[RMDB]
RNA sequence: GGGAACGACUCGAGUAGAGUCGAAAAAAUCGCCUGCUUGCCGUCCGAAUGGUCACGCAUCCGUGACCGACUGAAUGAGGUAGUGUUAGGCUGAUCUAUAAACCCGAAAUAGGUUAGCUCAAGCGGAACGUCUACUUUCCGGCUCCGGCCUACGAUACAGAUUAGCGAUGUUCGCAUCGCUAAUCUGAAAAGAAACAACAACAACAAC
Reactivity to 2A3 in 0.01 (KOAc 150mM, MgCl2 10mM, bicine 150mM(pH8.5), 24C), signal-to-noise 2, nucleotides 027 to 156: a010a010u040c010g000c040c010u000g020c020u040u020g020c030c010g140u030c010c000g080a080a090u150g010g000u000c000a000c010g050c050a190u190c150c080g010u000g000a000c010c000g000a010c010u110g100a070a130u160g050a030g050g000u070a040g040u000g100u150u080a000g060g000c050u110g000a010u020c040u070a080u050a110a120a110c000c000c040g000a030a120a000u060a020g070g010u090u080a040g000c050u060c180a040a000g040c000g050g030a040a010c040g040u000c040u050a150c080u100u080u010c000c020g060g020c080u020c020c060g030g020c000c010u040a020c030g010a020u030a110